[RMDB]
RNA sequence: GGGAACGACUCGAGUAGAGUCGAAAACGCCAGCGAUUCGUCGCUGGCGAAAUAAAUUCAGCGGUUUAAAUUUCGUCCGCAUAAGCGCUGAUGCGGACGAAAAAAGGCAGUUGUUCGCAACUGCCAACCUAACUAGGAAGUUCGCUUCCUAGUUAGGAAAAGAAACAACAACAACAAC
Reactivity to DMS in 0.01 (KOAc 150mM, MgCl2 10mM, bicine 150mM(pH8.5), 24C), signal-to-noise 3, nucleotides 027 to 126: c010g030c000c000a010g010c010g010a050u000u020c170g020u000c010g020c000u020g000g000c010g000a000a010a050u000a060a090a120u000u000c040a030g000c080g020g010u000u000u000a090a120a130u000u000u000c000g000u010c000c000g020c000a010u000a070a060g020c090g000c060u000g000a020u000g000c000g010g000a030c000g000a000a010a010a030a030a080g010g020c000a000g010u000u000g010u000u010c190g010c000a010a010c010u000g010c000c000a000a030
Reactivity to 2A3 in 0.01 (KOAc 150mM, MgCl2 10mM, bicine 150mM(pH8.5), 24C), signal-to-noise 3, nucleotides 027 to 126: c010g000c000c010a000g020c010g040a010u060u080c150g010u030c000g120c010u010g010g000c000g000a000a000a000u000a000a030a020u120u090c030a030g050c060g140g100u090u160u270a080a180a110u100u120u020c010g000u000c000c000g000c010a000u020a050a040g130c080g030c110u080g010a000u030g000c010g000g000a000c000g000a000a000a000a000a000a000g010g000c010a000g010u010u020g030u050u080c180g010c100a000a000c000u000g000c000c000a000a000
Chemical mapping of a 177-nucleotide RNA with DMS and 2A3.
It was measured as part of the RMDB library M2PK50.
For DMS, 3,479 sequencing reads were counted.
The 2A3 profile rests on 5,309 reads.
For 2A3 the reverse transcriptase was SuperScript II with manganese.
The reactions ran in a buffer of 150 mM KOAc, 10 mM MgCl2 and 150 mM bicine (pH 8.5), at 24 C.